The record gives the reactivity of an RNA of 207 nucleotides to 2A3. The reactions ran in a buffer of 150 mM KOAc, 10 mM MgCl2 and 150 mM bicine (pH 8.5), at 24 C. For 2A3, 1,603 sequencing reads were counted.

RNA sequence: GGGAACGACUCGAGUAGAGUCGAAAACAAGCAACAAUCGACUACUUCCGCUCGCACGAAGACUGGAGGUCAAACUACGUCGCAAGCCAACAAGCAGGCAGACGUAACAUCAUCCACAUCGGCUUCCUCGAAACACUCAACGAAGAAGAACUCACAGGCAGGAUAGAUAGUUCGCUAUCUAUCCUGCAAAAGAAACAACAACAACAAC
Reactivity to 2A3 in 0.01 (KOAc 150mM, MgCl2 10mM, bicine 150mM(pH8.5), 24C), signal-to-noise 2, nucleotides 027 to 156: c060a050a000g190c030a020a050c010a090a050u130c060g040a000c030u140a050c020u130u040c010c020g000c030u020c040g020c010a080c090g030a080a020g050a110c060u100g000g000a020g010g000u040c020a000a000a070c030u040a010c010g020u030c030g010c100a160a040g000c010c000a110a090c020a120a070g110c070a070g030g000c000a000g010a020c010g000u040a000a030c020a030u090c000a060u010c000c020a030c000a120u080c020g040g000c000u050u020c000c000u040c040g070a030a080a060c050a010c090u100c020a070a080c060g070a010a070g080a030a000g020a060a050c020u080c040a030c070a040g270